[RMDB]
Annotation:
Source: RMDB library M2RFPK, as collected in RNAgym. Chemical mapping of a 207-nucleotide RNA with 2A3. The 2A3 profile rests on 482 reads.
RNA sequence: GGGAACGACUCGAGUAGAGUCGAAAAGCUUCAUCUUGGCGCGGAGGUUUAACUGCGCUCGCUCCCCAUAUCGGUGUGGGCGCACCGGAUUUACAAAUUAAAGUCCUUUAGGGAGCGGAAAGGGACAAAAACUUGCACGUGUUCGCACGUGCAAGAACCAUGACCACUGGUUCGCCAGUGGUCAUGGAAAAGAAACAACAACAACAAC
Reactivity to 2A3 in 0.01 (KOAc 150mM, MgCl2 10mM, bicine 150mM(pH8.5), 24C), signal-to-noise 1, nucleotides 027 to 156: g000c020u100u170c040a070u030c050u030u050g020g010c000g000c000g000g110a050g080g010u090u170u170a080a040c010u050g030c000g000c010u000c000g000c000u010c090c000c000c000a040u090a290u130c010g000g000u000g000u020g020g000g000c080g000c000a000c020c000g000g020a000u240u190u040a080c180a010a030a010u070u170a110a200a010g010u010c010c070u000u030u040a010g000g000g000a000g030c070g000g000a050a000a000g110g010g020a010c080a010a300a030a030a080c010u000u010g000c010a000c000g010u010g000u000u030c170g010c120a040c000g010u000g110c010a000a000g000a000a000